[RMDB]
An RNA of 207 nucleotides, treated with 2A3 and DMS and read out base by base. The reactions ran in a buffer of 150 mM KOAc, 10 mM MgCl2 and 150 mM bicine (pH 8.5), at 24 C. The data come from the RNA Mapping Database (RMDB), library RNAMAK. For DMS the reverse transcriptase was MarathonRT. DMS (dimethyl sulfate) methylates the pairing face of unpaired adenines and cytosines. 2A3 is a SHAPE reagent: it acylates the 2'-hydroxyl of flexible nucleotides of all four kinds. For 2A3, 2,672 sequencing reads were counted.

RNA sequence: GGGAACGACUCGAGUAGAGUCGAAAAAGCAAGGUUCGCCUUGCUGCACUGGGGUCGUGGACGAGGGUUAGACAUGCUCUGAAGCCUCCACGGAGCAACAGCUAACCUCCCCACCGCCACGACGGAGGCACCCUCGCAUGUAUAAUUCGUUAUACAACUUUUGAAAGCGAUUCGUCGCUUUCAAAAGAAAAGAAACAACAACAACAAC
Reactivity to 2A3 in 0.01 (KOAc 150mM, MgCl2 10mM, bicine 150mM(pH8.5), 24C), signal-to-noise 3, nucleotides 027 to 156: a000g010c000a000a000g000g040u050u070c150g180c030c000u010u000g030c010u030g000c120a100c070u110g040g000g020g050u010c020g080u010g040g010a100c030g060a100g050g010g050u040u030a040g020a130c050a120u070g000c000u000c000u030g060a170a050g030c000c010u040c040c010a040c010g020g000a010g000c010a040a110c040a110g080c030u040a050a040c000c000u100c050c010c000c020a030c010c040g020c000c000a020c020g030a020c040g020g020a010g020g000c020a050c010c010c000u050c060g070c040a140u100g010u020a010u010a010a070u110u090c130g010u040u020a030u020a010c040a050a090
Reactivity to DMS in 0.01 (KOAc 150mM, MgCl2 10mM, bicine 150mM(pH8.5), 24C), signal-to-noise 2, nucleotides 027 to 156: a000g010c000a020a000g030g040u000u010c300g000c020c000u000u000g010c010u000g040c100a080c020u000g000g030g070g030u000c110g040u000g010g050a120c120g000a060g000g050g020u010u000a120g000a010c060a300u020g010c000u040c000u000g000a060a170g020c030c000u010c000c030a300c030g000g000a020g000c020a090a090c080a210g000c030u000a030a100c060c000u010c030c000c020c050a130c030c020g010c030c010a040c010g000a100c010g010g040a100g040g010c010a130c020c000c020u000c040g000c130a120u020g040u010a010u010a030a080u000u000c180g000u000u000a060u000a020c010a090a300